[RMDB]
Source information: The record gives the reactivity of an RNA of 177 nucleotides to DMS and 2A3.
RNA sequence: GGGAACGACUCGAGUAGAGUCGAAAAACGGGAGCCCCACCACACCUAGAGCCACGCUUUGAAGGAUCUGCCAAGCUCACUUUUAAUCAUGAGAAAGAAAUUACCCACAUGGAGUCAGCAGAAAAUGUGUCCUCACAAGAUUCGUCUUGUGAGGACAAAAAGAAACAACAACAACAAC
Reactivity to DMS in 0.01 (KOAc 150mM, MgCl2 10mM, bicine 150mM(pH8.5), 24C), signal-to-noise 2, nucleotides 027 to 126: a070c110g020g040g000a100g000c010c020c080c040a100c020c000a050c050a060c030c040u010a050g000a080g000c020c000a060c050g000c060u000u030u010g010a180a120g030g030a040u000c000u000g000c010c050a130a230g000c000u000c020a120c040u000u000u080u000a000a150u000c110a160u020g000a040g000a050a080a080g010a070a030a100u020u000a080c080c000c020a110c100a010u030g010g040a030g000u000c080a000g000c030a080g000a120a030a030a090u040g040
Reactivity to 2A3 in 0.01 (KOAc 150mM, MgCl2 10mM, bicine 150mM(pH8.5), 24C), signal-to-noise 2, nucleotides 027 to 126: a000c030g010g020g020a000g090c000c000c030c000a030c000c000a010c030a020c000c010u040a030g000a000g030c000c020a040c010g020c000u080u080u070g060a030a010g010g010a040u000c040u060g030c020c000a020a000g000c020u020c040a090c090u070u100u060u250a060a030u140c060a030u050g060a080g050a130a060a030g100a080a130a010u100u030a140c000c000c000a000c020a070u090g040g000a000g040u080c070a050g000c050a030g110a050a020a020a050u250g040

2A3 adducts were read by reverse transcription with SuperScript II with manganese.